About this RNA:
An RNA of 207 nucleotides, treated with 2A3 and DMS and read out base by base. Conditions: 150 mM KOAc, 10 mM MgCl2 and 150 mM bicine (pH 8.5), 24 C. It was measured as part of the RMDB library OK3TST. Reactivities are given for positions 27 through 156. The 2A3 profile rests on 3,524 reads. For 2A3 the reverse transcriptase was SuperScript II with manganese.
RNA sequence: GGGAACGACUCGAGUAGAGUCGAAAACGCAGACCGUCCAGCUAUGGGACUGAAUUAUGACGCUUGAACGAAUCAGCGCCUUUAUCACUUACUGCAUCGCCGUGCUGCUGGCAUGGCUGGGCGAUCUGUCGCUCAAGGAUGCCUCAACGGUUGGCGGGUACUCCAAUGCAUUCGUGCAUUGGAGUACAAAAGAAACAACAACAACAAC
Reactivity to 2A3 in 0.01 (KOAc 150mM, MgCl2 10mM, bicine 150mM(pH8.5), 24C), signal-to-noise 5, nucleotides 027 to 156: c040g010c000a010g010a020c000c010g010u020c010c000a000g000c010u040a030u080g010g030g100a060c060u050g040a040a070u150u070a150u250g050a070c070g000c050u150u150g060a190a060c080g070a170a190u110c040a020g000c010g030c040c000u110u200u120a150u120c050a060c140u090u300a050c040u070g020c020a070u090c060g020c070c030g040u090g030c050u020g010c030u060g040g030c000a000u000g000g010c000u000g000g000g000c000g000a000u030c010u030g060u040c030g020c010u030c020a040a050g090g000a070u120g010c000c000u060c060a110a050c070g070g000u030u040g020g020c040g020g040
Reactivity to DMS in 0.01 (KOAc 150mM, MgCl2 10mM, bicine 150mM(pH8.5), 24C), signal-to-noise 1, nucleotides 027 to 156: c040g010c000a060g000a070c010c030g010u000c020c010a050g000c050u000a130u000g070g020g000a180c060u000g000a120a120u000u030a110u010g030a040c030g020c040u000u010g060a040a180c170g000a220a250u000c060a100g000c000g040c000c010u000u030u010a180u030c040a060c050u000u010a080c030u000g000c080a100u000c030g020c090c040g080u010g030c020u000g000c030u010g030g030c010a030u000g000g100c000u010g000g020g030c000g010a040u000c040u000g000u010c030g050c000u000c050a050a060g010g020a120u000g000c030c030u000c060a100a050c070g040g000u000u000g030g070c080g000g020